[RMDB]
RNA sequence: GGGAACGACUCGAGUAGAGUCGAAAAGAUAUGGAACUGCAGACAUGAUCGGUGAUCGGAAACGAUCACCAGAUCAACAGCUGUUUCCUAAGUCAAAGAGGUUGCGGUGUUCGCACCGCAACCUCAAGAUGACUCUUACGUUCGCGUAAGAGUCAUCAAAAGAAACAACAACAACAAC
Reactivity to DMS in 0.01 (KOAc 150mM, MgCl2 10mM, bicine 150mM(pH8.5), 24C), signal-to-noise 2, nucleotides 027 to 126: g000a020u000a290u020g000g010a010a070c130u000g000c000a080g020a160c250a180u000g000a010u000c000g010g020u000g000a000u000c020g000g000a040a050a120c000g010a000u000c000a000c000c010a010g010a000u000c000a030a100c230a120g000c000u000g010u000u000u000c000c010u010a050a160g020u000c020a050a120a140g010a020g010g000u000u010g030c000g000g020u010g030u010u010c240g040c010a010c010c000g020c010a000a010c010c000u000c000a000a080
Reactivity to 2A3 in 0.01 (KOAc 150mM, MgCl2 10mM, bicine 150mM(pH8.5), 24C), signal-to-noise 1, nucleotides 027 to 126: g010a010u070a050u130g000g000a020a010c040u070g000c010a050g090a250c070a270u210g000a000u010c000g000g010u020g010a000u010c040g000g000a090a040a040c020g010a000u000c010a000c000c010a010g000a000u000c000a020a040c030a030g030c010u060g030u060u090u020c000c000u030a090a050g050u030c030a090a090a050g000a000g000g030u010u020g030c040g050g000u030g000u100u170c300g060c070a000c000c000g020c010a020a000c000c000u000c000a000a000
Source information: Conditions: 150 mM KOAc, 10 mM MgCl2 and 150 mM bicine (pH 8.5), 24 C. The record gives the reactivity of an RNA of 177 nucleotides to DMS and 2A3. Reactivities are rounded to 0.1 and cut off at 0 and 3. DMS adducts were read by reverse transcription with MarathonRT.